[RMDB]
RNA sequence: GGGAACGACUCGAGUAGAGUCGAAAAGAAAGCAACGGGGCUAGCCGUCAGGUGUUCCACCCCCCGAGAGGGUACGAGUGAGGCUUAUCCCGGGGAACUCGGCGAAUCGUCCCCACAUAGCAGUUCCGACGAAGGGCCUUCGGGCCCUUCAAAAGAAACAACAACAACAAC
Reactivity to DMS in 0.01 (KOAc 150mM, MgCl2 10mM, bicine 150mM(pH8.5), 24C), signal-to-noise 4, nucleotides 027 to 129: g000a060a090a200g000c050a120a060c280g000g000g010g070c000u020a130g000c060c020g000u030c120a090g030g010u020g020u010u060c120c040a280c000c000c000c000c000c000g040a040g010a060g000g010g060u020a130c030g000a120g000u110g010a180g010g000c030u000u020a170u090c000c050c010g000g030g020g010a120a060c120u000c010g040g030c000g060a020a110u060c000g000u040c000c050c000c050a070c160a050u100a140g040c040a100g010u000u000c050c020g010a140c000
Reactivity to 2A3 in 0.01 (KOAc 150mM, MgCl2 10mM, bicine 150mM(pH8.5), 24C), signal-to-noise 3, nucleotides 027 to 129: g070a010a150a000g020c010a010a000c020g000g000g040g000c040u020a030g030c040c010g010u050c010a120g020g000u080g030u170u060c100c020a030c040c000c000c000c000c000g030a050g000a050g110g010g000u060a090c030g040a040g070u190g080a100g000g020c000u070u030a200u130c000c000c000g010g000g000g020a040a050c030u020c000g010g000c010g020a000a040u100c000g050u170c020c000c070c000a020c000a030u090a000g020c010a010g000u030u000c020c000g050a020c040